[RMDB]
RNA sequence: GGGAACGACUCGAGUAGAGUCGAAAAAGCGCUGCUACGGCAGCGCAAAGCGCCAUUUACAGAGCUAUAAGCAUCAUAGUUGUCAUAGCUCUUUGAAUGGUACUGCAGCUAUGCUACGGCAUAGCAAUGCAUACAUCUACUUCGGUAGAUGUAUGCAAAAAGAAACAACAACAACAAC
Reactivity to DMS in 0.01 (KOAc 150mM, MgCl2 10mM, bicine 150mM(pH8.5), 24C), signal-to-noise 3, nucleotides 027 to 126: a110g020c010g000c020u000g030c000u010a100c210g020g000c000a000g000c000g040c000a000a030a040g010c060g000c010c000a010u000u000u000a030c100a020g020a000g000c000u000a010u000a150a120g020c010a020u020c300a160u020a120g000u020u000g010u020c170a030u000a010g000c000u000c000u010u020u000g010a000a000u000g010g010u000a040c020u020g010c140a080g000c000u000a000u000g000c000u000a080c200g020g010c000a010u000a000g010c000a060a030
Reactivity to 2A3 in 0.01 (KOAc 150mM, MgCl2 10mM, bicine 150mM(pH8.5), 24C), signal-to-noise 7, nucleotides 027 to 126: a000g000c020g000c000u000g000c010u020a040c300g130g000c000a000g000c000g010c000a000a010a000g000c000g000c000c000a000u000u000u010a030c030a000g000a000g000c010u010a000u030a130a060g090c030a030u110c040a130u150a230g160u110u050g060u100c010a010u010a010g000c000u000c000u000u000u000g000a000a000u000g000g010u020a050c070u080g050c020a060g000c000u000a000u000g000c000u010a030c210g080g010c000a010u000a000g010c010a000a030

This 177-nucleotide RNA was probed chemically with DMS and 2A3. For DMS the reverse transcriptase was MarathonRT. The RNA was probed in 150 mM KOAc, 10 mM MgCl2 and 150 mM bicine (pH 8.5) at 24 C. Reactivities are given for positions 27 through 126.